Description: This 207-nucleotide RNA was probed chemically with DMS and 2A3. For DMS the reverse transcriptase was MarathonRT. 2A3 is a SHAPE reagent: it acylates the 2'-hydroxyl of flexible nucleotides of all four kinds.
[RMDB]
RNA sequence: GGGAACGACUCGAGUAGAGUCGAAAACGUCCGAUGCGGAAGUUCGUGCUUCCGUCGAACGCGAAAGUCUGACGGCGGCCAUGAGUCGCAACGCAAAGCCGCGGCAAGUGGAGUUAGCGAGAAGAGAAAAAGUCACGAGUGUUCGCACUCGUGACAAUCUUCUAGAGUAGUUCGCUACUCUAGAAGAAAAAGAAACAACAACAACAAC
Reactivity to DMS in 0.01 (KOAc 150mM, MgCl2 10mM, bicine 150mM(pH8.5), 24C), signal-to-noise 2, nucleotides 027 to 156: c010g010u010c030c000g010a080u010g030c000g030g010a020a010g000u000u010c230g040u000g010c010u000u000c000c020g030u000c000g000a020a050c020g020c000g010a180a130a170g010u000c050u000g030a110c030g000g010c030g020g020c000c020a090u010g000a300g020u000c050g020c050a020a060c050g050c030a170a150a270g030c030c040g040c000g030g000c010a050a300g020u010g010g000a150g010u000u000a080g040c000g020a090g010a080a090g000a190g020a050a030a090a120a180g020u000c000a000c010g000a020g010u000g000u000u000c300g010c020a030c000u010c000g020u020g020a010c010a030a040
Reactivity to 2A3 in 0.01 (KOAc 150mM, MgCl2 10mM, bicine 150mM(pH8.5), 24C), signal-to-noise 5, nucleotides 027 to 156: c030g020u010c010c030g050a080u160g030c010g000g030a010a010g020u130u300c120g150u300g070c000u010u000c000c000g000u000c010g010a060a010c020g010c000g100a160a080a030g050u020c030u040g050a050c020g080g010c010g020g000c000c010a070u100g010a000g020u030c010g020c030a080a030c030g010c120a150a170a010g040c100c040g020c040g030g020c040a070a020g010u010g030g040a090g020u080u120a030g040c060g030a040g060a090a040g070a010g050a000a060a040a030a040g000u010c000a000c010g010a010g000u010g050u060u090c160g050c080a000c000u000c000g000u000g000a000c000a000a000
Values cover nucleotides 27 to 156.